[RMDB]
RNA sequence: GGGAACGACUCGAGUAGAGUCGAAAAGGAGGCUGAAGUGGGAGGAUUGCUUGAGCUCAGGAGUGUGAGGCUGCAAUGAGCUGUGAUCAUGCCACUGCACUCCAGCCUGGGCAACAGAGUGAGACCCACUAUGGACAAGCUUCGGCUUGUCCAUAGUAAAAGAAACAACAACAACAAC
Reactivity to DMS in 0.01 (KOAc 150mM, MgCl2 10mM, bicine 150mM(pH8.5), 24C), signal-to-noise 3, nucleotides 027 to 126: g000g010a060g010g010c070u000g010a050a050g030u010g010g000g030a080g000g000a150u010u000g010c020u010u000g010a140g000c010u000c020a050g010g010a050g000u000g020u010g010a030g010g010c210u020g020c020a040a020u010g000a120g020c000u000g010u030g010a150u000c150a080u010g000c000c010a030c060u010g020c010a090c030u000c000c000a030g010c000c010u010g000g010g000c000a040a090c120a160g020a040g000u000g000a090g000a140c010c010c020
Reactivity to 2A3 in 0.01 (KOAc 150mM, MgCl2 10mM, bicine 150mM(pH8.5), 24C), signal-to-noise 2, nucleotides 027 to 126: g010g020a020g040g000c050u030g070a090a000g020u080g070g010g030a070g050g040a050u030u030g020c010u030u000g050a000g000c010u010c020a010g000g020a090g070u060g050u090g020a020g000g080c150u040g010c050a000a130u070g020a080g030c030u000g040u070g060a150u200c050a030u260g000c000c000a010c030u000g000c010a010c010u020c010c000a010g000c010c000u000g000g010g070c010a000a010c010a050g100a000g020u020g020a020g020a040c000c000c010